[RMDB]
RNA sequence: GGGAACGACUCGAGUAGAGUCGAAAAGCAAGGUGUCCUCGACGGCGUUGAUCGCCACCGAAUCCAUGAACUCCAGCAUCGCGGGGCGAAGUCGGCCGGUAACCCCGAGCACCGCAUCGACCGCCGCCCAAUUGUGGUAAUUCGUUACCACAAUUGGAAAAGAAACAACAACAACAAC
Reactivity to 2A3 in 0.01 (KOAc 150mM, MgCl2 10mM, bicine 150mM(pH8.5), 24C), signal-to-noise 4, nucleotides 027 to 126: g040c040a050a070g060g010u050g040u080c010c010u030c040g070a070c030g040g040c020g040u060u150g150a140u210c030g020c020c010a030c020c010g030a030a040u020c040c020a060u130g060a070a060c030u030c030c010a030g050c020a110u090c060g000c010g010g010g010g010c010g000a030a010g110u130c020g000g000c010c000g010g010u040a060a060c000c000c030c000g000a020g030c030a040c020c000g000c010a030u040c020g130a200c000c040g070c030c000g030c000
Reactivity to DMS in 0.01 (KOAc 150mM, MgCl2 10mM, bicine 150mM(pH8.5), 24C), signal-to-noise 6, nucleotides 027 to 126: g010c100a100a090g010g030u000g010u010c060c030u000c030g010a080c070g020g010c030g010u000u000g010a100u000c030g010c020c010a100c050c040g000a110a090u010c080c040a080u000g010a080a090c070u010c030c030a090g000c100a070u010c110g010c060g010g000g020g000c020g010a090a080g010u000c030g000g020c230c020g000g000u010a090a120c140c100c010c020g020a190g020c110a070c020c010g010c090a090u000c050g010a080c040c030g000c040c030g000c080